RNA sequence: GGGAACGACUCGAGUAGAGUCGAAAACAAUAGGGAUAUGGAGAGACAUGCUAUCGGCUGCGAAGAACGAUCUCGGAAACGAGAUCGGGAGCAGCCCUCUAGCAACAGCUCUCCUAAGUCAGAAAAACUCUACAUCGUUGUUCGCAACGAUGUAGAGAAAAGAAACAACAACAACAAC
Reactivity to 2A3 in 0.01 (KOAc 150mM, MgCl2 10mM, bicine 150mM(pH8.5), 24C), signal-to-noise 1, nucleotides 027 to 126: c060a010a260u300a300g150g110g050a090u110a020u260g000g000a030g000a000g000a030c000a110u090g000c000u000a060u300c170g000g000c000u000g040c000g140a300a090g030a060a020c000g000a000u000c000u010c050g030g000a070a070a030c050g030a020g000a000u010c030g000g000g010a010g030c010a000g010c010c000c010u030c030u000a000g050c000a030a050c030a110g030c000u000c000u050c030c000u000a040a010g010u030c030a010g300a150a110a070a050a050
Reactivity to DMS in 0.01 (KOAc 150mM, MgCl2 10mM, bicine 150mM(pH8.5), 24C), signal-to-noise 2, nucleotides 027 to 126: c010a180a170u030a100g020g030g030a020u000a300u000g000g000a080g020a010g060a050c190a300u000g000c000u060a000u010c300g000g000c000u010g000c000g000a060a280g050a260a230c010g010a000u000c000u010c050g000g000a060a130a180c030g000a000g040a000u000c000g000g000g010a050g010c010a000g000c060c010c050u000c190u000a000g010c000a000a050c290a070g000c000u020c000u000c000c000u000a050a060g040u020c080a100g000a140a110a120a130a140
The record gives the reactivity of an RNA of 177 nucleotides to 2A3 and DMS. The RNA was probed in 150 mM KOAc, 10 mM MgCl2 and 150 mM bicine (pH 8.5) at 24 C. It was measured as part of the RMDB library TTRDES. Values cover nucleotides 27 to 126.